Background:
Source: RMDB library OK1LIB, as collected in RNAgym. Chemical mapping of a 177-nucleotide RNA with DMS and 2A3. Values cover nucleotides 27 to 126. For 2A3 the reverse transcriptase was SuperScript II with manganese. The DMS profile rests on 3,704 reads. For 2A3, 2,309 sequencing reads were counted.
RNA sequence: GGGAACGACUCGAGUAGAGUCGAAAACUGUGAAUGAGCCGGCUUUCAGAACGGGUAUCUUUAGAUUCCCGACUGGAUCCGCACUGCUCGUUACCAGUGCGUACACAUUCGGAUGAUCAGGUAUUAGAGUUGCAAGUAACUUCGGUUACUUGCAACUAAAAGAAACAACAACAACAAC
Reactivity to DMS in 0.01 (KOAc 150mM, MgCl2 10mM, bicine 150mM(pH8.5), 24C), signal-to-noise 2, nucleotides 027 to 126: c030u010g000u010g040a030a010u030g000a020g030c020c030g020g060c140u000u000u040c000a010g010a160a130c000g000g000g000u000a040u000c030u010u060u020a090g000a010u000u000c000c000c000g010a210c030u010g000g010a000u010c100c030g020c100a050c140u030g000c030u020c030g000u010u000a060c100c010a010g000u000g000c060g000u000a110c130a100c120a120u030u020c000g000g020a050u000g000a030u000c060a050g010g010u010a110u000u020a100g000
Reactivity to 2A3 in 0.01 (KOAc 150mM, MgCl2 10mM, bicine 150mM(pH8.5), 24C), signal-to-noise 4, nucleotides 027 to 126: c020u040g120u170g140a020a000u030g010a000g030c000c000g000g020c100u010u040u020c020a060g030a300a130c000g000g000g030u030a010u010c030u060u210u100a160g010a050u070u060c020c000c010g000a020c020u000g000g000a020u050c050c030g000c030a120c130u050g000c000u000c000g010u030u030a110c030c000a010g040u010g020c060g030u200a060c070a010c020a110u120u140c040g050g030a050u070g040a060u140c030a080g050g020u100a130u100u140a120g100